[RMDB]
RNA sequence: GGGAACGACUCGAGUAGAGUCGAAAAUCAUUCAGAAAUUUUGUCAUGAUUUAAUAAAUCAAUUGGCUUGCUUAACCCUUAUUUAAAAAACAAAUCUUUUUUAAUUGGACACAAAUAAUAUCGGCACGUAUUCCUGAUCAUUCGUGAUCAGGAAUACAAAAGAAACAACAACAACAAC
Reactivity to 2A3 in 0.01 (KOAc 150mM, MgCl2 10mM, bicine 150mM(pH8.5), 24C), signal-to-noise 4, nucleotides 027 to 126: u040c000a020u110u010c000a010g180a090a210a120u200u190u140u110g040u050c010a020u020g010a040u010u040u090a120a050u100a100a040a010u020c020a030a100u050u020g000g000c000u010u040g050c010u080u090a100a120c000c020c000u030u020a080u060u130u110a010a080a020a010a010a010c080a030a300a080u120c070u020u060u060u020u030u050a060a070u050u040g030g000a010c020a000c000a110a140a040u220a070a050u080a070u130c010g030g030c060a010c150